[RMDB]
RNA sequence: GGGAACGACUCGAGUAGAGUCGAAAAGCGUGCGUGUUCGCACGCACGCAAAGCGGCCAGCACCAGGCCGCCAAACAAUAUGGAGCACAAAUGUCAGCAAAAAAAGAAUGGUGUUCGCACCAUUCAACAAGUUCCCUUAGUUCGCUAAGGGAACUUGAAAAGAAACAACAACAACAAC
Reactivity to DMS in 0.01 (KOAc 150mM, MgCl2 10mM, bicine 150mM(pH8.5), 24C), signal-to-noise 1, nucleotides 027 to 126: g010c000g000u000g000c000g070u000g010u010u010c280g000c020a060c010g030c000a000c020g060c000a010a070a080g010c030g000g020c000c000a100g020c080a230c010c020a060g000g020c000c000g010c010c090a020a090a070c190a000a010u000a030u000g010g000a150g030c000a180c300a020a070a050u010g010u000c090a120g000c090a000a000a100a070a100a130a080g030a030a000u000g010g000u000g040u000u000c170g030c000a000c030c000a030u000u000c010a040a100
Reactivity to 2A3 in 0.01 (KOAc 150mM, MgCl2 10mM, bicine 150mM(pH8.5), 24C), signal-to-noise 1, nucleotides 027 to 126: g000c010g020u000g000c050g030u010g000u100u150c240g000c180a000c000g000c000a000c000g000c020a010a010a010g000c000g010g000c010c020a030g000c020a000c000c020a000g000g010c000c010g050c010c040a140a120a010c060a000a030u040a050u070g000g020a010g020c080a010c090a090a080a040u300g060u240c060a040g070c100a060a140a000a000a000a060a060g000a000a000u020g000g000u000g000u020u030c100g030c020a010c000c000a000u000u000c000a000a000
The record gives the reactivity of an RNA of 177 nucleotides to DMS and 2A3.